[RMDB]
Structure probing data (2A3 and DMS) for a 177-nucleotide construct. In probing experiments dimethyl sulfate is read out at A N1 and C N3, which are open when not base-paired. The RNA was probed in 150 mM KOAc, 10 mM MgCl2 and 150 mM bicine (pH 8.5) at 24 C.
RNA sequence: GGGAACGACUCGAGUAGAGUCGAAAAGACACGACGGAGACGUCGUGUCAAGUCCAGUGCGAAAGCACUGGACAAAUAAGGGCUGUUUGUCUCGCUGACGUUCAGCCCCAAACAAAAAAUGUCAGCAACCAUUAAAUAGCUUCGGCUAUUUAAUGGUAAAAGAAACAACAACAACAAC
Reactivity to 2A3 in 0.01 (KOAc 150mM, MgCl2 10mM, bicine 150mM(pH8.5), 24C), signal-to-noise 2, nucleotides 027 to 126: g000a000c010a000c000g000a000c010g000g030a060g020a050c000g000u010c000g000u010g000u000c000a000a000g000u000c000c010a000g000u000g000c020g070a150a030a020g000c010a000c000u010g000g000a010c000a010a010a000u130a060a070g000g010g000c010u010g040u030u020u010g100u060c090u050c200g000c000u000g010a000c000g000u000u010c010a000g000c000c000c000c020a050a080a020c040a020a010a000a020a000a000u030g000u010c000a000g000c010a010
Reactivity to DMS in 0.01 (KOAc 150mM, MgCl2 10mM, bicine 150mM(pH8.5), 24C), signal-to-noise 2, nucleotides 027 to 126: g010a010c000a010c000g000a000c010g000g000a240g000a180c010g050u000c000g030u000g010u000c000a020a070g030u000c000c020a010g010u000g010c000g010a150a090a180g030c000a010c000u000g000g010a000c000a030a030a070u010a120a180g010g010g040c000u000g010u000u000u000g000u000c090u010c150g020c010u000g000a020c010g000u000u000c010a000g000c000c010c000c090a010a030a030c060a000a000a030a020a010a010u000g000u000c000a010g010c000a230